[RMDB]
Chemical mapping of a 207-nucleotide RNA with 2A3.
RNA sequence: GGGAACGACUCGAGUAGAGUCGAAAAUUAAUGAAGCAAAUCUCCAAACGCCAACGAUGAGCGUUUCGCAAUCGCCGCUUAAGGCUUUUGCCGAGGCUGCUUGAGCCUUGCUACCAAAGAAAAGCCGAAAACCCAAAUGUCUUCGGACAUUUGGGAACUCACGCUAUAUGUUCGCAUAUAGCGUGAGAAAAGAAACAACAACAACAAC
Reactivity to 2A3 in 0.01 (KOAc 150mM, MgCl2 10mM, bicine 150mM(pH8.5), 24C), signal-to-noise 2, nucleotides 027 to 156: u160u090a080a040u140g030a080a020g040c040a080a090a170u050c080u040c110c050a050a020a020c040g000c010c010a120a110c130g160a160u150g030a030g090c020g010u020u030u100c050g000c000a000a000u020c020g040c050c000g060c150u300u180a130a120g000g000c000u000u010u010u010g000c000c010g020a000g030g000c060u100g000c000u050u040g010a000g010c010c000u010u050g010c020u090a130c010c040a070a000a000g030a030a070a020a020g020c010c010g070a060a050a080a060c000c000c000a000a000a000u000g000u000c010u020u070c250g080g040a000c000a000u010u000u000g000g000g000a000a000
The 2A3 profile rests on 954 reads.